[RMDB]
RNA sequence: GGGAACGACUCGAGUAGAGUCGAAAACUCCCCUCAAAAUCGUUUCAGUCCAAAAUUGAUUCGGCGGCUCUGUCAUGAGGCCGAAACGAAGGCACGUACCCCUUCGAAUGGCGUCGGGGAGUCAGCGAAAGCACUGACCCUUUCGAGGGUCAGUGAAUACACGUUAUGGGUUCGCCCAUAACGUGUAAAAAGAAACAACAACAACAAC
Reactivity to DMS in 0.01 (KOAc 150mM, MgCl2 10mM, bicine 150mM(pH8.5), 24C), signal-to-noise 1, nucleotides 027 to 156: c080u000c000c000c010c060u000c020a060a190a130a110u000c020g000u000u000u000c020a110g040u000c090c050a040a120a200a080u010u020g030a160u000u000c030g030g030c090g010g010c010u000c010u030g060u000c110a120u000g000a090g000g030c000c030g030a020a020a120c020g000a070a070g040g030c110a250c080g010u000a090c030c080c020c010u010u000c000g020a080a190u030g000g050c070g000u000c020g000g000g020g030a040g050u010c000a090g010c030g000a060a110a120g010c020a020c000u020g020a040c040c000c000u000u000u010c190g010a030g000g060g040u020c000a010g000u000g010a130a100
Reactivity to 2A3 in 0.01 (KOAc 150mM, MgCl2 10mM, bicine 150mM(pH8.5), 24C), signal-to-noise 2, nucleotides 027 to 156: c040u030c000c040c060c000u080c040a160a210a090a090u140c050g030u050u080u090c140a100g060u040c060c090a140a130a130a180u060u140g070a190u130u000c020g170g020c030g000g000c050u010c030u040g170u190c050a230u150g000a000g000g000c000c000g070a000a000a000c020g000a000a000g000g040c080a000c200g200u230a100c000c000c000c030u000u000c040g020a050a040u170g000g100c140g140u030c000g020g050g000g000a000g000u000c020a020g050c000g010a090a000a010g030c000a000c000u000g010a010c000c000c010u040u080u060c150g120a000g000g000g020u010c000a000g000u000g000a000a000
The record gives the reactivity of an RNA of 207 nucleotides to DMS and 2A3. Values cover nucleotides 27 to 156. The RNA was probed in 150 mM KOAc, 10 mM MgCl2 and 150 mM bicine (pH 8.5) at 24 C. The DMS profile rests on 1,696 reads. DMS adducts were read by reverse transcription with MarathonRT.